[RMDB]
RNA sequence: GGGAACGACUCGAGUAGAGUCGAAAAAAAGCGUGAAAGUGAUCUAUGAUCCUAAAAAGAUCAGUCUGGACAAGUUGCUACGCUAUUAUUUUAAGGUGAUUGAUCCAGUGAGCGUGAACAAGCAGGGCCCACUGAUUCGAUUCGUCGAAUCAGUGGGAAAAGAAACAACAACAACAAC
Reactivity to DMS in 0.01 (KOAc 150mM, MgCl2 10mM, bicine 150mM(pH8.5), 24C), signal-to-noise 1, nucleotides 027 to 126: a080a180a110g000c050g020u000g030a130a110a090g030u010g000a060u000c020u000a100u000g000a060u000c000c000u030a050a020a060a110a080g010a020u000c010a040g010u000c040u010g000g000a090c020a080a060g030u010u000g060c030u010a050c130g000c100u000a030u000u020a080u000u000u000u000a070a190g010g010u010g000a090u000u000g000a120u010c030c000a020g020u000g010a110g000c030g010u000g010a040a090c160a060a120g000c070a040g010g020g010
The data come from the RNA Mapping Database (RMDB), library OK2TST. The record gives the reactivity of an RNA of 177 nucleotides to DMS. The DMS profile rests on 816 reads.